[RMDB]
RNA sequence: GGGAACGACUCGAGUAGAGUCGAAAAAUGCCACUCAUAUCAAUUCCUUCGCAAUCACGUGACGGCAAACUAUCGUAAAGUAGGACAUUACCUUUGCUGGCUCAGAAAGGUGGCACCUGGGUUGCCACCCCAUGCGUCAAUUCGUUGACGCAUGGGGAAAAGAAACAACAACAACAAC
Reactivity to DMS in 0.01 (KOAc 150mM, MgCl2 10mM, bicine 150mM(pH8.5), 24C), signal-to-noise 5, nucleotides 027 to 126: a080u000g000c020c010a060c090u000c100a050u010a090u000c120a080a180u000u000c020c000u000u010c120g010c060a060a070u010c080a080c110g010u010g010a070c060g000g000c070a040a040a070c120u000a050u010c110g020u010a030a070a090g020u000a060g000g010a130c140a050u000u010a060c060c070u000u000u000g000c010u010g010g000c050u000c040a080g000a050a090a100g000g010u000g000g010c010a020c040c070u010g010g010g010u010u010g000c020c090a110
Reactivity to 2A3 in 0.01 (KOAc 150mM, MgCl2 10mM, bicine 150mM(pH8.5), 24C), signal-to-noise 7, nucleotides 027 to 126: a000u070g010c010c000a020c020u120c040a130u120a060u170c050a040a120u070u040c010c010u060u070c060g010c060a040a110u110c030a040c130g040u050g050a020c030g010g000c020a040a040a020c060u100a060u210c060g150u120a050a080a120g040u060a060g050g060a010c020a130u070u100a080c030c000u020u020u040g010c010u030g050g010c020u020c040a010g070a080a070a020g040g000u010g020g000c010a010c000c040u090g050g000g030u040u040g020c000c010a030
Structure probing data (DMS and 2A3) for a 177-nucleotide construct. DMS adducts were read by reverse transcription with MarathonRT. The RNA was probed in 150 mM KOAc, 10 mM MgCl2 and 150 mM bicine (pH 8.5) at 24 C. The 2A3 profile rests on 9,557 reads. The data come from the RNA Mapping Database (RMDB), library OK2TST. Reactivities are given for positions 27 through 126.